Overview
An RNA of 207 nucleotides, treated with 2A3 and DMS and read out base by base. For DMS the reverse transcriptase was MarathonRT. Values cover nucleotides 27 to 156. It was measured as part of the RMDB library M2RFPK. 2A3 adducts were read by reverse transcription with SuperScript II with manganese.
RNA sequence: GGGAACGACUCGAGUAGAGUCGAAAAGCUUAAUUACCUGCGCUGAGCCCUUCUCCCCCAGCUUGCCUGUGUCCUAGGGAAUUGGAAGGUCAUCCUUCACAGGAUCGUGUGGAAGUCCUGCUCGGGGUCCAAACAUGGUAAUUCGUUACCAUGUUAAUCUGAACAUAGUAUUCGUACUAUGUUCAGAAAAAGAAACAACAACAACAAC
Reactivity to 2A3 in 0.01 (KOAc 150mM, MgCl2 10mM, bicine 150mM(pH8.5), 24C), signal-to-noise 4, nucleotides 027 to 156: g020c020u090u140a060a020u160u120a180c020c020u070g070c060g030c090u050g040a040g010c000c000c000u080u060c110u050c000c000c000c010c000a010g010c020u020u080g050c010c010u060g010u000g020u080c010c020u020a040g010g030g060a070a090u090u080g060g020a050a020g050g020u080c020a070u110c020c000u040u010c030a040c000a050g010g010a040u030c040g020u060g010u020g130g020a030a030g020u010c000c010u050g010c000u010c030g000g000g010g010u010c020c040a030a020a000c010a000u000g000g000u000a000a010u050u030c070g030u010u000a000c010c000a000u000g000u000u000a010a040
Reactivity to DMS in 0.01 (KOAc 150mM, MgCl2 10mM, bicine 150mM(pH8.5), 24C), signal-to-noise 3, nucleotides 027 to 156: g010c050u010u010a060a120u000u000a050c020c030u000g020c070g010c060u000g010a120g010c030c010c020u000u010c040u000c040c000c010c000c020a110g010c050u010u010g000c040c000u000g000u000g010u000c050c040u000a110g000g020g010a060a160u000u000g010g010a060a060g030g020u000c060a120u010c020c000u000u000c060a060c050a050g020g000a040u000c070g030u000g020u010g000g010a110a100g020u000c020c020u010g020c020u000c050g010g020g030g010u000c040c060a090a030a020c000a000u000g010g010u000a000a080u000u010c270g030u000u000a010c000c000a000u000g010u000u000a030a140
For DMS, 11,953 sequencing reads were counted. Conditions: 150 mM KOAc, 10 mM MgCl2 and 150 mM bicine (pH 8.5), 24 C. The 2A3 profile rests on 3,717 reads.